[RMDB]
RNA sequence: GGGAACGACUCGAGUAGAGUCGAAAAGUAUUGAUUUCGCCUUCAACGUACGUAUUAUUCCCGAAUAUCAAAUGGAAUAUACGGACGUUAAUGGUGACAGGCUUUACCGAUUAGAUGCUGCUAAGGCGCUUGACUUCCGCUUCGGCGGAAGUCAAGCAAAAGAAACAACAACAACAAC
Reactivity to 2A3 in 0.01 (KOAc 150mM, MgCl2 10mM, bicine 150mM(pH8.5), 24C), signal-to-noise 1, nucleotides 027 to 126: g000u000a210u130u090g060a060u050u100u040c020g000c000c000u000u040c020a020a000c000g010u030a000c000g020u000a020u120u110a020u000u130c000c000c030g050a230a300u300a130u160c120a040a080a130u080g000g000a000a000u000a000u000a010c000g020g030a010c030g020u050u050a010a010u050g000g020u000g000a000c000a000g040g170c020u020u040u000a020c000c000g040a020u030u230a050g090a080u090g030c000u010g000c070u140a000a120g150g000c020